Structure probing data (DMS and 2A3) for a 177-nucleotide construct.
Source: RMDB library OK1LIB, as collected in RNAgym.
The 2A3 profile rests on 5,533 reads.

RNA sequence: GGGAACGACUCGAGUAGAGUCGAAAAGCUCGGAGACGAGCAAGGCUGACAAAACCGUGUCCCAACCUCCACGUGGUGUCGGCUGGAUAAUGCUGCAUUAUGUUGCAUUUAUCAACUGGGAAAGAAACAGGAUAUACGACUUCGGUCGUAUAUCCUGAAAAGAAACAACAACAACAAC
Reactivity to DMS in 0.01 (KOAc 150mM, MgCl2 10mM, bicine 150mM(pH8.5), 24C), signal-to-noise 3, nucleotides 027 to 126: g030c000u000c000g000g000a220g010a290c010g000a020g030c020a090a060g000g000c040u020g000a010c030a040a060a130a080c100c040g010u020g000u000c010c020c020a100a110c070c060u010c130c040a040c040g010u020g010g000u000g000u000c010g020g000c010u000g030g010a020u000a020a030u000g010c020u000g010c000a140u040u040a110u050g000u000u020g000c020a000u000u020u020a010u000c000a150a080c130u020g000g000g000a060a030a050g000a120a080a160
Reactivity to 2A3 in 0.01 (KOAc 150mM, MgCl2 10mM, bicine 150mM(pH8.5), 24C), signal-to-noise 6, nucleotides 027 to 126: g000c000u000c000g020g020a100g010a030c000g000a000g000c000a010a040g040g000c010u000g020a010c010a020a110a040a050c110c020g030u040g030u020c000c000c010a040a100c010c020u080c050c020a090c060g080u110g000g050u040g010u010c010g030g000c020u050g040g000a010u010a030a000u010g010c020u030g000c000a070u120u110a110u300g030u030u030g010c020a010u020u030u080a020u030c020a020a080c060u090g020g030g030a040a100a120g070a010a120a010